An RNA of 177 nucleotides, treated with DMS and 2A3 and read out base by base. The reactions ran in a buffer of 150 mM KOAc, 10 mM MgCl2 and 150 mM bicine (pH 8.5), at 24 C. DMS adducts were read by reverse transcription with MarathonRT. It was measured as part of the RMDB library OK1LIB. For 2A3 the reverse transcriptase was SuperScript II with manganese.
RNA sequence: GGGAACGACUCGAGUAGAGUCGAAAAUUAUCAUAAGCAAACCGAUGAAAGGGACAAUGCCUAGAGGUAAAACGGAAGCUGAAGAUCAACAGUAUUAUAAAUCAUUGCAAACUUCUUCGAAAGAUCGAGCCCUAUUAACGUUCGCGUUAAUAGGGCUAAAAGAAACAACAACAACAAC
Reactivity to DMS in 0.01 (KOAc 150mM, MgCl2 10mM, bicine 150mM(pH8.5), 24C), signal-to-noise 2, nucleotides 027 to 126: u070u020a060u060c060a060u020a140a130g000c020a020a130a170c090c040g050a090u000g040a140a070a170g000g000g000a130c150a090a080u010g000c010c070u040a010g000a170g000g000u000a000a040a110a110c100g000g000a160a080g020c100u000g010a030a040g000a020u000c140a090a100c050a000g000u010a030u020u000a030u010a050a040a050u000c030a070u000u000g000c150a090a080a090c100u000u000c000u000u010c120g000a100a100a040g000a080u070c070g000
Reactivity to 2A3 in 0.01 (KOAc 150mM, MgCl2 10mM, bicine 150mM(pH8.5), 24C), signal-to-noise 2, nucleotides 027 to 126: u110u110a010u010c060a080u060a090a000g030c000a000a090a060c000c000g070a040u170g060a280a060a070g010g060g010a090c040a130a000u020g100c020c030u010a000g070a130g080g080u090a000a150a000a000c030g020g000a040a000g000c020u060g000a030a030g040a070u070c040a000a020c000a010g030u030a070u300u030a070u190a040a060a130u060c010a170u000u210g090c140a090a000a110c000u010u010c000u040u070c000g110a130a060a050g040a010u010c210g000

DMS (dimethyl sulfate) methylates the pairing face of unpaired adenines and cytosines. Reactivities are given for positions 27 through 126.